[RMDB]
RNA sequence: GGGAACGACUCGAGUAGAGUCGAAAACUGCACUCGCUCUGCCCGAAGCUGUGUUGUGUGGGGAGAUCCGACGGACAGAUCGGAUGAAGAUGGUGCAACUGAGUAUGCGAGAGCAUUUGAAUGCAGGGCGUUAAUGGUCCUUCGGGAUCGUUAGCGCAAAAGAAACAACAACAACAAC
Reactivity to 2A3 in 0.01 (KOAc 150mM, MgCl2 10mM, bicine 150mM(pH8.5), 24C), signal-to-noise 9, nucleotides 027 to 126: c010u020g000c010a010c020u050c040g020c010u010c020u040g070c010c010c030g050a090a030g020c030u030g020u020g020u220u040g020u020g040u100g030g040g010g010a100g020a040u020c000c000g000a010c020g040g060a030c040a090g070a220u020c000g010g000a000u030g020a030a030g070a060u150g030g040u070g010c000a010a020c020u050g030a010g070u110a050u150g040c030g030a040g000a010g040c020a040u080u140u190g100a100a040u050g010c010a010g040g070
Reactivity to DMS in 0.01 (KOAc 150mM, MgCl2 10mM, bicine 150mM(pH8.5), 24C), signal-to-noise 9, nucleotides 027 to 126: c040u000g000c030a050c040u010c050g010c030u000c030u000g010c040c050c020g010a100a100g010c030u010g010u010g010u010u000g010u010g010u020g020g000g000g010a160g010a060u010c010c010g010a030c040g010g020a110c160a150g000a140u000c000g000g000a030u010g010a070a060g010a110u020g010g010u010g010c030a060a080c050u000g000a090g010u020a040u010g000c020g000a130g000a140g010c010a060u010u020u020g010a070a070u010g010c020a030g000g010
This 177-nucleotide RNA was probed chemically with 2A3 and DMS. The data come from the RNA Mapping Database (RMDB), library OK1LIB. The RNA was probed in 150 mM KOAc, 10 mM MgCl2 and 150 mM bicine (pH 8.5) at 24 C. DMS adducts were read by reverse transcription with MarathonRT.